An RNA of 177 nucleotides, treated with DMS and 2A3 and read out base by base.
RNA sequence: GGGAACGACUCGAGUAGAGUCGAAAAGAUAUGGAGUGAACUACACGCAAGUAGGCGAAGAACUCGGAAACGAGGGAGCCUAAACUACGUGCACUCCUAAGUCAAAACGUGUGGUUCGCCACACGAAGGAUGUCUAUCAGUUCGCUGAUAGACAUCCAAAAGAAACAACAACAACAAC
Reactivity to DMS in 0.01 (KOAc 150mM, MgCl2 10mM, bicine 150mM(pH8.5), 24C), signal-to-noise 2, nucleotides 027 to 126: g030a030u000a300u000g000g020a020g010u000g000a110a040c060u010a300c000a010c000g030c000a000a020g000u000a010g000g030c010g020a080a100g000a080a160c000u000c010g010g000a070a090a180c020g020a040g010g000g010a080g030c000c000u000a010a030a090c000u000a030c020g010u000g010c000a040c000u000c000c000u000a030a050g010u020c050a060a030a130a120c000g030u000g020u000g000g000u000u040c230g020c000c000a010c000a000c010g000a030a080
Reactivity to 2A3 in 0.01 (KOAc 150mM, MgCl2 10mM, bicine 150mM(pH8.5), 24C), signal-to-noise 3, nucleotides 027 to 126: g030a010u080a020u170g010g000a010g000u020g040a080a010c080u180a030c300a000c010g010c000a000a010g020u000a010g030g000c020g100a300a060g030a090a050c000u010c000g020g020a050a020a010c020g000a000g000g040g000a000g010c000c000u020a030a020a010c020u010a000c000g000u000g010c010a000c000u000c010c000u020a090a000g050u020c030a030a010a090a070c010g000u010g000u000g020g060u070u090c250g040c090c000a000c000a000c000g000a050a020
Conditions: 150 mM KOAc, 10 mM MgCl2 and 150 mM bicine (pH 8.5), 24 C. DMS adducts were read by reverse transcription with MarathonRT. The data come from the RNA Mapping Database (RMDB), library TTRDEL.